[RMDB]
RNA sequence: GGGAACGACUCGAGUAGAGUCGAAAAUAUUUCUUAGUAAUGUUUACUGGAACUUAAAUCUGUGAUAACCUAAACUAAAAGUCUCAAACAACCCGUUACUUGCUGACCAAUUUUUGUAGGUACUGGGGACGGUGUCCCAAUUCGUUGGGACACCGUCAAAAGAAACAACAACAACAAC
Reactivity to 2A3 in 0.01 (KOAc 150mM, MgCl2 10mM, bicine 150mM(pH8.5), 24C), signal-to-noise 2, nucleotides 027 to 126: u090a030u030u090u000c020u000u140a050g030u010a090a120u300g130u040u270u090a090c020u020g040g010a170a000c010u050u170a110a030a150u040c030u040g160u080g040a110u020a060a060c020c000u000a140a050a140c000u000a060a060a020a000g020u040c070u020c030a030a070a120c030a020a050c030c000c000g030u060u030a050c020u040u000g000c010u040g020a140c010c050a090a160u120u130u000u080u000g000u000a020g020g000u000a030c000u040g000g000g000

The record gives the reactivity of an RNA of 177 nucleotides to 2A3. The RNA was probed in 150 mM KOAc, 10 mM MgCl2 and 150 mM bicine (pH 8.5) at 24 C. Reactivities are rounded to 0.1 and cut off at 0 and 3.